[RMDB]
RNA sequence: GGGAACGACUCGAGUAGAGUCGAAAAGAUAUGGAUCAUGUCUUAUGCAAGCAUAUGGGAGCCUAUCGAAUCGGAAACGAUUCGUAAGGGCGAAGAACAUAUGCUUGUUAUCACAUGAUCCUAAGUCGAUAGAGGAAAUGUUCGCAUUUCCUCUAUCAAAAGAAACAACAACAACAAC
Reactivity to 2A3 in 0.01 (KOAc 150mM, MgCl2 10mM, bicine 150mM(pH8.5), 24C), signal-to-noise 5, nucleotides 027 to 126: g040a010u090a030u170g000g000a000u010c010a010u010g050u030c040u150u300a140u300g000c010a000a010g000c010a000u020a010u020g020g020g030a100g000c010c010u110a130u240c010g000a010a010u010c000g000g020a040a070a040c000g000a000u000u020c010g020u040a220a300g080g030g010c000g030a070a030g030a010a010c000a000u020a000u000g010c000u000u000g000u010u010a000u010c010a000c000a000u010g000a010u010c000c000u000a040a000g080u070c060
Reactivity to DMS in 0.01 (KOAc 150mM, MgCl2 10mM, bicine 150mM(pH8.5), 24C), signal-to-noise 5, nucleotides 027 to 126: g010a090u010a300u000g000g000a020u000c000a000u000g010u000c090u010u000a060u010g030c010a010a010g000c000a000u000a010u000g010g000g000a140g010c000c000u000a300u000c000g020a010a000u000c000g010g000a150a110a260c010g010a010u000u000c010g010u010a060a300g000g000g010c020g030a040a150g010a150a220c010a000u000a000u010g010c000u000u010g000u000u000a010u000c180a020c000a000u000g000a020u000c000c000u000a020a060g020u000c130
Chemical mapping of a 177-nucleotide RNA with 2A3 and DMS. Reactivities are given for positions 27 through 126. DMS adducts were read by reverse transcription with MarathonRT. It was measured as part of the RMDB library TTRINS. The RNA was probed in 150 mM KOAc, 10 mM MgCl2 and 150 mM bicine (pH 8.5) at 24 C. For DMS, 7,234 sequencing reads were counted.